[RMDB]
RNA sequence: GGGAACGACUCGAGUAGAGUCGAAAAGAUAUGGAAACUCAAGACUGUGCGUUUGACGUGGAUCGGAAACGAUCCACCGAGCCAGUCAAAGAGUUUCCUAAGUCAAACCGGCUGUUCGCAGCCGGAACUACCUGGUAACGUUCGCGUUACCAGGUAGAAAAGAAACAACAACAACAAC
Reactivity to 2A3 in 0.01 (KOAc 150mM, MgCl2 10mM, bicine 150mM(pH8.5), 24C), signal-to-noise 2, nucleotides 027 to 126: g010a030u070a050u190g000g010a020a010a020c010u020c000a070a060g010a000c010u040g160u300g230c040g200u120u300u300g120a100c060g000u010g010g010a010u000c000g020g000a090a090a040c000g000a010u000c000c000a000c000c000g000a000g000c000c000a000g000u000c010a000a000a000g010a010g000u000u000u000c010c000u000a010a020g000u010c020a050a040a110c000c000g000g000c000u000g070u090u110c300g030c140a000g000c000c000g010g010a010a020
Reactivity to DMS in 0.01 (KOAc 150mM, MgCl2 10mM, bicine 150mM(pH8.5), 24C), signal-to-noise 3, nucleotides 027 to 126: g000a050u000a300u000g000g000a030a010a000c000u010c000a050a300g000a030c000u000g030u020g020c000g030u000u020u010g020a140c300g000u000g010g000a000u000c000g000g000a110a070a200c020g030a010u010c000c000a010c000c000g000a100g000c010c020a000g020u000c000a010a070a160g000a010g000u000u000u000c000c000u010a000a090g010u000c010a110a090a170c010c000g000g000c000u010g000u010u010c220g030c010a000g000c000c000g000g000a050a080